[RMDB]
Source: RMDB library TTRINS, as collected in RNAgym.
The record gives the reactivity of an RNA of 177 nucleotides to DMS and 2A3.
For 2A3, 4,974 sequencing reads were counted.
For DMS, 2,182 sequencing reads were counted.

RNA sequence: GGGAACGACUCGAGUAGAGUCGAAAAGAUAUGGAGAUCCGUUGCAUGGGCGCAGGAGAGGGAGCUCGGAAACGAGCUCCUCCCCACCUCCUGAACUACGCUCAGUGAUGACGGAUCUCCUAAGUCACACUACGUUAAGGUUCGCCUUAACGUAGUGAAAAGAAACAACAACAACAAC
Reactivity to DMS in 0.01 (KOAc 150mM, MgCl2 10mM, bicine 150mM(pH8.5), 24C), signal-to-noise 3, nucleotides 027 to 126: g010a010u000a300u000g000g000a030g020a030u010c000c000g040u000u000g010c080a130u010g000g000g000c020g010c030a010g030g010a000g000a180g000g000g010a020g040c020u010c000g000g010a060a140a190c000g010a010g010c010u000c010c010u000c020c000c010c040a300c080c020u000c000c000u010g010a080a090c230u020a300c030g000c000u010c010a030g000u010g010a190u000g000a020c020g020g000a020u000c000u000c000c010u000a000a090g030u000c030a300
Reactivity to 2A3 in 0.01 (KOAc 150mM, MgCl2 10mM, bicine 150mM(pH8.5), 24C), signal-to-noise 2, nucleotides 027 to 126: g010a010u070a070u190g000g000a030g000a010u000c000c010g010u000u060g060c150a300u300g010g010g010c020g000c030a010g000g000a010g020a040g040g000g000a000g000c010u000c010g000g020a080a070a030c010g000a000g000c000u010c010c000u010c010c000c000c000a020c000c000u020c000c000u010g040a160a090c210u300a080c190g030c000u010c030a170g220u120g300a300u060g020a000c000g000g000a000u030c010u000c000c000u000a010a000g000u000c010a000